Structure probing data (2A3) for a 177-nucleotide construct. For 2A3 the reverse transcriptase was SuperScript II with manganese.
RNA sequence: GGGAACGACUCGAGUAGAGUCGAAAAAGAUACCGUCGUAGUCUUAACCAUAAACUAUGCCGACUAGGGAUCGGGCGAUGUUAUUAUUUUGACUCGCUCGGCACCUUACGAGAAAUCAAAGUCUUUGGAAAUCAAUGAGCUUCGGCUCAUUGAUUUCAAAAGAAACAACAACAACAAC
Reactivity to 2A3 in 0.01 (KOAc 150mM, MgCl2 10mM, bicine 150mM(pH8.5), 24C), signal-to-noise 2, nucleotides 027 to 126: a030g100a050u100a040c040c000g030u090c020g040u020a000g000u000c000u120u030a100a050c040c000a070u180a080a040a030c060u040a000u030g010c040c000g050a160c060u000a010g030g000g040a010u000c010g000g000g000c000g010a010u280g080u000u030a070u090u000a170u020u290u030u180g000a000c000u000c020g000c000u020c000g000g010c080a110c000c000u020u040a010c030g060a050g060a090a090a000u250c050a080a090a030g170u000c000u000u000u030g010